[RMDB]
RNA sequence: GGGAACGACUCGAGUAGAGUCGAAAAGAUAUGGAACGACUCAGGGAGCUCGGGUAUCGGAAACGAUAUAGAGCGAGGAUCUGAGGUCGUUCCUAAGUCAAAAUCGCAUGUGUUCGCACAUGCGAAACUAUUCUGUCAGCUUCGGCUGACAGAAUAGAAAAGAAACAACAACAACAAC
Reactivity to DMS in 0.01 (KOAc 150mM, MgCl2 10mM, bicine 150mM(pH8.5), 24C), signal-to-noise 2, nucleotides 027 to 126: g000a070u020a300u030g000g000a010a010c000g020a040c000u000c010a030g020g000g010a040g020c000u000c000g000g030g010u000a010u000c000g010g000a180a140a210c010g010a000u000a010u000a220g010a010g010c000g030a110g000g000a000u030c000u000g010a050g030g010u000c000g030u000u000c000c000u000a010a100g000u000c050a120a050a080a170u010c000g000c000a000u000g020u000g010u000u030c300g030c000a000c010a000u000g030c010g030a000a030a130
Reactivity to 2A3 in 0.01 (KOAc 150mM, MgCl2 10mM, bicine 150mM(pH8.5), 24C), signal-to-noise 1, nucleotides 027 to 126: g000a000u040a070u190g000g000a010a010c000g000a000c000u000c030a000g030g090g040a070g050c020u030c020g300g300g000u000a010u000c000g000g000a130a020a030c020g000a000u000a000u030a060g020a020g000c010g020a160g000g030a030u010c000u000g000a050g110g000u000c010g020u000u000c000c000u010a010a000g000u000c020a000a020a020a300u030c000g000c010a010u000g030u000g030u140u090c300g040c140a000c010a020u000g000c000g000a000a000a000